[RMDB]
This 170-nucleotide RNA was probed chemically with DMS and 2A3. For 2A3, 38,694 sequencing reads were counted. Conditions: 150 mM KOAc, 10 mM MgCl2 and 150 mM bicine (pH 8.5), 24 C. For DMS, 39,714 sequencing reads were counted. Values are in units of 0.01, from 0 to 300, in steps of 10. 2A3 adducts were read by reverse transcription with SuperScript II with manganese.
RNA sequence: GGGAACGACUCGAGUAGAGUCGAAAACUGGAGAAGGGAGACUCGGGAACGCCUAGCAUCUGAGGGACGAAGCCGCCCCCGGGCGCUCCCCUCGGAGGUCCACUGGGUGGGUUCACAUCCCCAACCCUAAACAGUGUCUUCGGACACUGUAAAAGAAACAACAACAACAAC
Reactivity to DMS in 0.01 (KOAc 150mM, MgCl2 10mM, bicine 150mM(pH8.5), 24C), signal-to-noise 8, nucleotides 027 to 129: c070u040g040g010a030g010a100a070g010g020g010a040g000a080c080u000c090g030g010g010a070a040c130g030c050c050u000a020g030c140a160u030c050u030g000a060g000g000g000a090c160g000a060a190g030c070c060g000c000c020c020c080c150g000g000g000c040g020c050u030c000c020c010c000u010c050g010g010a040g000g000u040c070c100a060c120u040g010g020g060u000g000g020g000u000u000c030a060c130a120u070c040c010c010c040a050a080c010c000c000u000a080a070
Reactivity to 2A3 in 0.01 (KOAc 150mM, MgCl2 10mM, bicine 150mM(pH8.5), 24C), signal-to-noise 9, nucleotides 027 to 129: c020u030g030g020a030g000a060a060g010g010g000a060g020a020c020u010c050g030g010g010a040a020c020g010c010c030u040a050g030c020a110u020c030u050g020a050g020g020g010a010c060g070a070a000g050c090c010g030c020c010c000c010c010g030g010g000c030g020c000u010c000c000c000c010u010c000g000g000a020g020g040u070c060c030a050c080u030g000g010g020u040g030g040g000u060u090c070a050c010a120u090c010c000c000c000a040a120c020c000c000u080a150a150